[RMDB]
RNA sequence: GGGAACGACUCGAGUAGAGUCGAAAAGGACUGCGGGCAGACCCGGGGGCAGUACCCGGCGCCUCCACCCGAGCAGCUGACAAUGCGAGAUCUCGUUUUUACGAGUUCUCAUUCCGUGCGACGGACUGUCUCAUGUAGAAUUCGUUCUACAUGAGACAAAAGAAACAACAACAACAAC
Reactivity to 2A3 in 0.01 (KOAc 150mM, MgCl2 10mM, bicine 150mM(pH8.5), 24C), signal-to-noise 7, nucleotides 027 to 126: g050g010a040c020u050g030c050g000g010g000c010a040g010a110c020c000c010g010g000g000g010g020c040a030g030u050a100c000c010c000g010g000c020g010c000c000u000c010c010a060c020c010c000g010a030g000c010a000g000c020u080g030a060c080a110a150u210g080c100g020a000g000a020u000c000u000c000g010u030u050u100u160u300a020c010g000a000g000u010u000c010u000c000a010u070u010c000c010g030u090g110c070g070a090c010g030g020a020c030u040
Reactivity to DMS in 0.01 (KOAc 150mM, MgCl2 10mM, bicine 150mM(pH8.5), 24C), signal-to-noise 3, nucleotides 027 to 126: g000g000a080c010u020g020c060g000g000g020c080a090g010a110c160c030c020g000g050g000g010g000c190a090g000u040a060c010c010c000g010g000c150g020c040c020u010c060c050a140c030c060c010g020a120g000c020a050g000c080u000g000a100c160a080a060u010g010c100g000a000g010a000u010c020u010c000g010u000u010u010u010u010a010c010g010a030g030u000u010c000u000c010a140u020u020c010c000g030u020g010c030g000a190c020g010g010a100c300u030

Structure probing data (2A3 and DMS) for a 177-nucleotide construct.
Reactivities are given for positions 27 through 126.
DMS adducts were read by reverse transcription with MarathonRT.
The RNA was probed in 150 mM KOAc, 10 mM MgCl2 and 150 mM bicine (pH 8.5) at 24 C.